Structure probing data (DMS and 2A3) for a 170-nucleotide construct. For 2A3 the reverse transcriptase was SuperScript II with manganese. Conditions: 150 mM KOAc, 10 mM MgCl2 and 150 mM bicine (pH 8.5), 24 C. Reactivities are given for positions 27 through 129. For 2A3, 10,813 sequencing reads were counted. The DMS profile rests on 5,659 reads. Source: RMDB library 15KLIB, as collected in RNAgym.
RNA sequence: GGGAACGACUCGAGUAGAGUCGAAAACUCUUGGAUGCAAAAUUUUAACGCUCACCCCACGCAACAAGUGGAGUGGCGUUUCUGACUUGUCCCUCAAACAAAAACUCCUUUACACCUUCUAUGGUAACAACGAACACCUUCGGGUGUUCGAAAAGAAACAACAACAACAAC
Reactivity to DMS in 0.01 (KOAc 150mM, MgCl2 10mM, bicine 150mM(pH8.5), 24C), signal-to-noise 2, nucleotides 027 to 129: c030u030c030u050u060g040g040a010u020g020c020a000a080a040a130u010u050u050u020a020a030c010g000c000u000c020a050c010c000c010c000a030c020g050c170a050a250c210a050a120g140u000g020g000a000g120u040g000g040c000g010u010u010u050c040u000g020a000c060u000u000g000u000c020c020c010u040c000a090a120a060c120a060a030a040a040a040c120u050c080c100u060u050u010a030c100a000c010c020u010u000c090u120a000u040g030g040u010a130a090c100a090a030
Reactivity to 2A3 in 0.01 (KOAc 150mM, MgCl2 10mM, bicine 150mM(pH8.5), 24C), signal-to-noise 7, nucleotides 027 to 129: c020u020c010u050u120g040g030a050u090g040c050a020a050a060a080u060u110u040u070a010a060c000g010c000u130c060a000c000c010c020c000a010c010g100c040a060a270c060a300a120g000u000g000g000a020g010u000g000g000c000g000u010u000u000c020u040g100a060c020u030u050g000u050c000c020c000u090c070a120a130a110c110a020a050a050a020a020c010u040c040c000u080u100u110a070c050a040c020c000u130u180c020u160a100u150g020g020u030a010a010c080a020a050